[RMDB]
RNA sequence: GGGAACGACUCGAGUAGAGUCGAAAAAGCAAUCAUCAAAGAUCGCAUUUGACAGUUAUGUCAAAGGGACACACCCUUCGCGCGUCCUGGGGCGUGCCAGUCGAUGACGAGGAAAAUCGUAUCGAUUGUAGAAAAUAAUAUUCGUAUUAUUUUCUACAAAAGAAACAACAACAACAAC
Reactivity to 2A3 in 0.01 (KOAc 150mM, MgCl2 10mM, bicine 150mM(pH8.5), 24C), signal-to-noise 9, nucleotides 027 to 126: a010g050c040a030a020u050c020a010u050c080a110a070a050g030a040u030c020g000c060a100u030u010u030g020a020c020a050g100u300u210a210u180g010u040c000a010a010a010g060g040g040a020c030a000c000a040c080c010c000u080u120c050g000c010g000c010g030u040c010c030u130g050g020g030g000c020g010u010g020c010c010a030g010u020c010g010a020u050g090a050c010g010a030g050g080a080a080a050a110u060c030g000u020a020u020c010g020a020u000u060
Reactivity to DMS in 0.01 (KOAc 150mM, MgCl2 10mM, bicine 150mM(pH8.5), 24C), signal-to-noise 6, nucleotides 027 to 126: a090g010c050a070a030u000c000a050u010c220a090a120a130g000a030u000c050g010c040a180u010u000u010g000a000c000a060g000u020u040a060u020g010u000c010a010a010a020g020g010g000a100c090a090c150a080c020c010c010u010u010c130g020c030g020c090g000u010c030c050u020g010g010g010g010c050g010u000g010c010c060a050g010u000c020g010a030u000g000a030c030g000a020g000g010a080a050a100a110u020c040g010u000a040u000c010g000a120u000u010